An RNA of 307 nucleotides, treated with 2A3 and DMS and read out base by base.
It was measured as part of the RMDB library POS240.
Reactivities are rounded to 0.1 and cut off at 0 and 3.
For 2A3, 6,125 sequencing reads were counted.
Reactivities are given for positions 27 through 266.

RNA sequence: GGGAACGACUCGAGUAGAGUCGAAAACGCACGCUACGGCGUGCGAGUUAUGCUACGGCAUAACAAGCUUAUAGCUUCGGCUAUAAGCACGUGGUGCGUACGCGCACCACGAAGUACGUCCGUACGCGGACGUACAAGUCGAAUGCGUGAGCAUUCGACAAAUCCUUUUCAGUUGGGCCUUCUGGUGAUGUUUCUGGCCACCCAGGAGGUCCUGAGGAAGAGGUGGACGGCCAGAUUGACUAACAUCCGUGCUACGGCACGGAUGAACUACUACAUUCGUGUAGUAGAAAAGAAACAACAACAACAAC
Reactivity to 2A3 in 0.01 (KOAc 150mM, MgCl2 10mM, bicine 150mM(pH8.5), 24C), signal-to-noise 4, nucleotides 027 to 266: c020g010c000a000c000g010c010u040a030c220g180g000c000g000u000g010c000g000a000g010u020u000a000u000g010c000u020a040c270g140g010c000a010u000a000a000c010a010a050g000c000u000u000a000u000a000g000c000u020u020c300g130g000c000u000a000u010a010a000g010c000a000c020g000u000g000g000u010g000c000g020u020a020c270g020c000g000c110a000c000c000a000c010g010a070a010g010u010a000c000g010u000c000c000g020u010a030c300g020c000g090g000a000c000g000u000a000c020a010a030g010u000c000g000a000a010u010g010c020g020u060g020a020g010c000a000u000u000c010g000a000c000a000a010a000u040c010c000u050u030u050u030c080a170g120u220u130g020g010g000c010c010u000u010c010u010g000g040u090g050a100u110g140u070u140u050c020u010g010g000c000c000a000c010c000c010a000g010g010a000g000g040u000c010c020u080g040a050g030g000a010a030g010a010g020g010u040g060g030a050c070g010g000c000c010a010g030a040u040u160g090a060c060u060a140a020c010a010u020c010c010g030u010g010c000u030a070c220g130g010c000a000c000g000g020a000u000g010a000a000
Reactivity to DMS in 0.01 (KOAc 150mM, MgCl2 10mM, bicine 150mM(pH8.5), 24C), signal-to-noise 3, nucleotides 027 to 266: c010g010c020a010c010g030c000u010a100c150g030g010c000g040u000g000c000g010a010g000u000u010a000u010g020c000u000a060c150g010g000c000a000u000a010a010c010a180a140g000c000u000u000a000u000a010g010c000u010u020c250g020g010c010u000a000u000a010a000g010c000a090c030g020u000g000g010u000g000c010g020u010a090c220g030c020g040c010a020c000c010a000c000g000a090a140g010u000a000c010g000u000c000c010g020u020a080c260g030c010g000g000a010c000g010u010a000c010a110a130g020u000c010g000a040a020u010g000c000g010u010g010a150g010c000a010u000u010c010g000a000c020a020a070a050u010c010c000u000u000u000u000c030a090g020u000u010g020g010g000c010c000u010u000c010u000g000g000u010g000a150u010g010u000u010u000c000u010g010g010c020c000a230c130c000c010a010g010g000a010g000g000u000c000c000u020g010a050g010g000a020a010g020a010g000g020u000g010g020a110c170g000g020c000c020a010g000a110u020u010g010a130c190u010a090a230c020a000u010c000c010g040u000g000c000u010a070c160g010g010c010a000c010g000g000a000u010g010a040a130